[RMDB]
RNA sequence: GGGAACGACUCGAGUAGAGUCGAAAAGUACGCCAGCAACAACCCCAACGUGUCGGGACUGACGCCUCCGGAGACGAAGGAUUCGUGCGCCACGUCGGCCAGCGUCAGUUGCCGGCGGAUGGUCGGCAUUAGGGAUGGAAUUCGUUCCAUCCCUAAUAAAAGAAACAACAACAACAAC
Reactivity to DMS in 0.01 (KOAc 150mM, MgCl2 10mM, bicine 150mM(pH8.5), 24C), signal-to-noise 8, nucleotides 027 to 126: g010u010a060c100g010c010c010a080g020c060a110a060c100a090a140c060c010c000c050a150a180c080g010u020g010u010c010g020g010g020a020c020u000g000a010c020g010c020c090u030c130c140g010g010a300g000a020c010g010a100a110g010g000a080u010u010c080g020u010g010c070g000c000c000a160c020g010u000c000g010g020c040c040a140g000c010g010u000c010a010g000u000u000g000c000c010g010g000c000g000g000a070u010g000g000u010c050g000g000c080
Reactivity to 2A3 in 0.01 (KOAc 150mM, MgCl2 10mM, bicine 150mM(pH8.5), 24C), signal-to-noise 9, nucleotides 027 to 126: g050u040a030c090g010c020c000a010g050c040a040a100c010a030a080c030c000c000c020a040a040c070g040u060g150u200c010g010g000g010a010c000u010g010a000c010g010c010c040u210c100c120g010g020a040g000a020c020g040a220a150g040g010a040u120u140c100g040u160g080c040g010c020c000a020c010g010u010c010g070g240c010c010a000g000c000g010u010c010a010g000u000u020g060c000c000g000g000c030g010g020a070u090g020g050u090c060g010g010c020
Chemical mapping of a 177-nucleotide RNA with DMS and 2A3. For DMS, 24,871 sequencing reads were counted. For 2A3, 16,761 sequencing reads were counted. Source: RMDB library OK1LIB, as collected in RNAgym. The reactions ran in a buffer of 150 mM KOAc, 10 mM MgCl2 and 150 mM bicine (pH 8.5), at 24 C.